[RMDB]
RNA sequence: GGGAACGACUCGAGUAGAGUCGAAAACAGAAAAGACAAGAUGAGAAAGUGCAGUAUUGACUGUCUUCAAACGCACCUGUCCUUGCUCAAGUGCUGGGAUUGUGUGCCAACGGCUAUGAUAGAUAUGAUGCUCAGCUUUUUUCGAAAAGCUGAGCAUAAAAGAAACAACAACAACAAC
Reactivity to 2A3 in 0.01 (KOAc 150mM, MgCl2 10mM, bicine 150mM(pH8.5), 24C), signal-to-noise 3, nucleotides 027 to 126: c010a000g120a020a160a040a000g070a080c180a050a070g050a100u180g050a010g120a060a030a020g070u180g110c000a020g000u070a130u120u150g240a060c010u010g000u010c000u000u070c030a020a020a020c080g000c040a000c000c000u000g000u010c010c000u000u020g010c000u080c150a300a140g020u060g130c000u020g000g000g000a010u000u020g020u050g000u000g220c030c000a070a000c010g060g000c040u010a010u110g020a070u010a220g080a010u010a090u210g070
Reactivity to DMS in 0.01 (KOAc 150mM, MgCl2 10mM, bicine 150mM(pH8.5), 24C), signal-to-noise 2, nucleotides 027 to 126: c000a160g010a220a030a040a060g010a050c080a090a090g000a050u020g010a270g010a020a050a070g010u050g060c020a010g000u010a050u040u000g000a110c060u000g000u000c050u000u000c010a060a060a160c300g020c000a000c000c030u010g000u000c000c000u000u000g000c000u000c280a070a070g000u050g020c000u000g000g000g000a020u000u030g000u040g000u000g030c000c040a030a030c070g000g000c070u020a010u020g000a050u030a090g000a100u020a010u030g000
An RNA of 177 nucleotides, treated with 2A3 and DMS and read out base by base. The reactions ran in a buffer of 150 mM KOAc, 10 mM MgCl2 and 150 mM bicine (pH 8.5), at 24 C. High DMS reactivity at an A or C suggests that its Watson-Crick edge is free. Reactivities are given for positions 27 through 126.